[RMDB]
RNA sequence: GGGAACGACUCGAGUAGAGUCGAAAAGAUAUGGACUCCUACGGAAUCAUCGUUGAGGCUUUGAUCUAUAGGUCGGAAACGACCUGAUAGGGAGCCUACACGAUGAUUCCGUAGGAGUCCUAAGUCACCUAGUCUUUAGGUUCGCCUAAAGACUAGGAAAAGAAACAACAACAACAAC
Reactivity to DMS in 0.01 (KOAc 150mM, MgCl2 10mM, bicine 150mM(pH8.5), 24C), signal-to-noise 2, nucleotides 027 to 126: g010a070u000a300u010g010g010a030c000u000c010c000u000a010c000g010g000a030a000u010c020a000u010c000g020u000u010g010a090g020g000c000u000u020u010g020a080u020c010u000a010u000a010g020g020u000c000g000g010a090a140a220c020g020a010c010c010u000g000a020u000a000g000g000g010a020g000c000c000u000a060c100a020c010g020a000u000g000a000u000u000c000c030g010u000a000g000g020a000g030u000c000c000u000a010a070g010u010c050a300